[RMDB]
RNA sequence: GGGAACGACUCGAGUAGAGUCGAAAAACGCCUUAGCUGCAUAAUCGCGGAAUCUGCUUUGCACUGCUCCGAGCGGGGCAUGAUUCCGACGCCAAUCGGGGCUUGCUUUUUAGCGGCGUGUAAACGUUAAAAGGGACUUUUUUUACACUAAGGAUUCGAUUGAAUAACGCUUCGGCGUUAUUCAAUCAAAAGAAACAACAACAACAAC
Reactivity to 2A3 in 0.01 (KOAc 150mM, MgCl2 10mM, bicine 150mM(pH8.5), 24C), signal-to-noise 1, nucleotides 027 to 156: a000c070g060c010c010u070u060a060g030c060u220g060c110a120u200a230a090u270c100g000c000g010g010a010a000u000c000u010g020c000u040u010u020g000c020a010c010u030g000c000u000c000c010g010a010g000c020g000g000g000g000c010a010u160g010a000u020u010c000c000g090a060c020g020c030c090a020a020u080c010g000g000g000g030c000u040u300g000c000u040u000u020u000u000a000g000c000g040g000c240g000u000g000u010a030a050a000c000g000u000u000a000a000a000a000g010g010g000a010c030u200u020u010u000u000u000u010a000c000a000c010u030a070a060g070g000a060u060u240c060